[RMDB]
RNA sequence: GGGAACGACUCGAGUAGAGUCGAAAAGAUAUGGACCUCCUGGAGGACAUGAAGACGUUUCGGAAACGAAACUAUCUUCAACAGCCUCGGAGGUCCUAAGUCAAACCGACGGGUUCGCCCGUCGGAACAACAGAAUAAGCUUCGGCUUAUUCUGUUGAAAAGAAACAACAACAACAAC
Reactivity to DMS in 0.01 (KOAc 150mM, MgCl2 10mM, bicine 150mM(pH8.5), 24C), signal-to-noise 4, nucleotides 027 to 126: g010a020u000a090u020g000g000a000c000c020u010c000c010u010g070g040a020g010g000a020c080a300u010g000a010a010g020a020c280g000u010u000u000c000g010g000a020a010a050c000g000a010a000a020c000u000a300u000c010u000u000c000a090a090c230a190g010c020c000u000c030g000g010a020g020g000u010c000c000u000a000a050g010u000c010a090a130a250c010c000g000a000c000g000g000g010u000u020c290g000c000c000c010g000u000c000g000g000a030a070
Reactivity to 2A3 in 0.01 (KOAc 150mM, MgCl2 10mM, bicine 150mM(pH8.5), 24C), signal-to-noise 3, nucleotides 027 to 126: g000a010u010a020u060g020g010a000c010c010u030c030c040u210g300g060a010g010g000a020c180a300u300g010a000a010g000a000c000g000u000u010u000c010g000g000a010a010a010c000g010a000a000a000c000u010a050u020c000u030u000c020a050a090c110a080g010c000c010u010c010g000g000a010g000g000u000c000c000u000a010a000g000u000c000a000a030a080c000c000g000a000c000g000g000g060u070u120c300g140c040c020c040g000u000c000g000g000a010a030

Chemical mapping of a 177-nucleotide RNA with DMS and 2A3.
The RNA was probed in 150 mM KOAc, 10 mM MgCl2 and 150 mM bicine (pH 8.5) at 24 C.
For 2A3, 8,119 sequencing reads were counted.
The DMS profile rests on 4,247 reads.
Source: RMDB library TTRDES, as collected in RNAgym.
For DMS the reverse transcriptase was MarathonRT.